[RMDB]
RNA sequence: GGGAACGACUCGAGUAGAGUCGAAAAGAACCGCGAUUCGUCGCGGUUCGAGCGCCGUAGCGCGCAACGGCGUAAGGGCAGCAUUAGCGCGCAGCUGCCGACGAUCGGGUGGUUUCGACCACCCGAAAUCUACCAAAGGUUUCGACCUUUGGUAGAUAAAAGAAACAACAACAACAAC
Reactivity to 2A3 in 0.01 (KOAc 150mM, MgCl2 10mM, bicine 150mM(pH8.5), 24C), signal-to-noise 2, nucleotides 027 to 126: g000a000a010c010c000g000c000g020a020u040u060c190g020u020c000g100c020g000g000u000u010c000g000a000g030c000g000c000c010g020u020a030g050c030g000c000g000c070a020a000c010g010g010c000g000u030a030a150g090g010g000c000a010g000c020a060u070u160a070g010c030g000c020g000c060a000g020c000u000g000c010c000g050a110c090g010a070u060c000g000g040g000u000g020g010u010u070u100c130g090a030c020c000a000c010c000c000g000a000a010
Reactivity to DMS in 0.01 (KOAc 150mM, MgCl2 10mM, bicine 150mM(pH8.5), 24C), signal-to-noise 6, nucleotides 027 to 126: g000a010a010c000c000g020c000g010a030u000u010c190g020u000c000g030c000g010g000u000u000c000g000a100g000c020g010c000c010g010u000a070g020c050g010c030g020c030a100a020c020g010g000c000g020u010a060a100g010g000g000c010a010g010c030a100u010u000a120g000c030g010c030g050c060a190g000c010u000g010c010c000g000a070c170g010a130u000c000g010g000g020u000g010g010u010u000u010c190g010a030c010c000a000c000c000c000g000a000a020

The record gives the reactivity of an RNA of 177 nucleotides to 2A3 and DMS. The reactions ran in a buffer of 150 mM KOAc, 10 mM MgCl2 and 150 mM bicine (pH 8.5), at 24 C. The DMS profile rests on 9,322 reads. For DMS the reverse transcriptase was MarathonRT.